RNA sequence: GGGAACGACUCGAGUAGAGUCGAAAAGAUAUGGAUCGACAACGGGACAACAGCUCUUGUCGGAAACGACAAGAGACAUGUCCGUUGAAUCGAUCCUAAGUCAAAACUCCAGGCUUCGGCCUGGAGAGGAGUCUAAGAGGUUCGCCUCUUAGACUCCAAAAGAAACAACAACAACAAC
Reactivity to DMS in 0.01 (KOAc 150mM, MgCl2 10mM, bicine 150mM(pH8.5), 24C), signal-to-noise 1, nucleotides 027 to 126: g010a040u000a300u000g010g000a010u000c000g020a050c020a020a010c010g040g030g000a070c090a090a080c300a160g000c000u000c000u000u010g000u000c000g000g010a070a090a170c000g000a050c000a020a020g020a050g040a020c090a060u000g000u000c000c000g010u010u000g000a100a100u000c010g000a010u000c000c000u000a000a080g030u000c040a100a050a080a220c000u000c010c000a000g000g010c000u000u020c160g020g000c000c000u000g040g010a000g010a030
Reactivity to 2A3 in 0.01 (KOAc 150mM, MgCl2 10mM, bicine 150mM(pH8.5), 24C), signal-to-noise 1, nucleotides 027 to 126: g000a000u060a000u190g000g000a000u010c010g000a010c010a030a010c030g210g100g220a060c070a160a040c020a260g050c000u010c000u000u000g000u000c000g020g040a050a060a000c010g000a000c010a000a020g010a000g060a010c000a010u090g070u000c000c000g000u000u020g010a110a130u020c000g000a000u020c000c000u000a080a010g010u010c050a100a000a060a260c000u000c000c000a010g010g000c030u030u300c300g170g040c030c000u010g000g010a010g000a000